[RMDB]
RNA sequence: GGGAACGACUCGAGUAGAGUCGAAAAGUAUGGAUGCCACCGUGACGGCUCAAUCACACAAGUGCCAACGAUAACGAGGCGCUCACUAUUGCUGCGUAACUGACGGCCUGACGGUCUGACGUUACAAAAAACGAAAAGUGGUUCGCCACUUUUCGAACCGUAUGUAACUCUUCGGAGUUACAUACGGAAAAGAAACAACAACAACAAC
Reactivity to 2A3 in 0.01 (KOAc 150mM, MgCl2 10mM, bicine 150mM(pH8.5), 24C), signal-to-noise 2, nucleotides 027 to 156: g110u080a070u180g050g080a070u130g020c030c010a060c070c080g040u090g040a050c070g010g020c010u020c070a050a090u140c020a020c010a020c040a180a060g030u030g070c020c030a070a090c070g100a120u080a160a050c090g020a050g040g000c010g010c040u050c030a050c030u130a070u150u220g030c070u100g020c030g030u010a010a000c010u000g040a010c000g000g040c000c020u180g120a090c160g000g000u000c000u010g010a010c020g010u010u020a010c010a010a070a000a000a000a000c000g000a000a000a000a000g010u000g000g010u020u030c090g030c090c000a000c000u000u000u000u000c000g010a010a000
Reactivity to DMS in 0.01 (KOAc 150mM, MgCl2 10mM, bicine 150mM(pH8.5), 24C), signal-to-noise 2, nucleotides 027 to 156: g040u000a070u000g070g010a090u000g040c000c000a110c070c090g020u020g000a140c180g020g120c030u000c040a120a110u000c030a030c100a080c000a040a050g150u020g000c020c030a090a250c060g000a120u000a080a170c070g010a220g010g020c000g050c000u000c040a060c090u000a150u000u000g000c000u000g000c000g010u020a040a000c000u020g000a300c300g000g110c000c000u000g020a110c300g050g020u000c000u000g010a300c200g000u000u020a020c000a010a030a030a060a090a150c030g040a030a000a020a010g040u000g020g000u000u000c300g020c030c000a020c000u000u050u000u000c000g000a010a060
This 207-nucleotide RNA was probed chemically with 2A3 and DMS. High DMS reactivity at an A or C suggests that its Watson-Crick edge is free. 2A3 adducts were read by reverse transcription with SuperScript II with manganese. The 2A3 profile rests on 3,075 reads.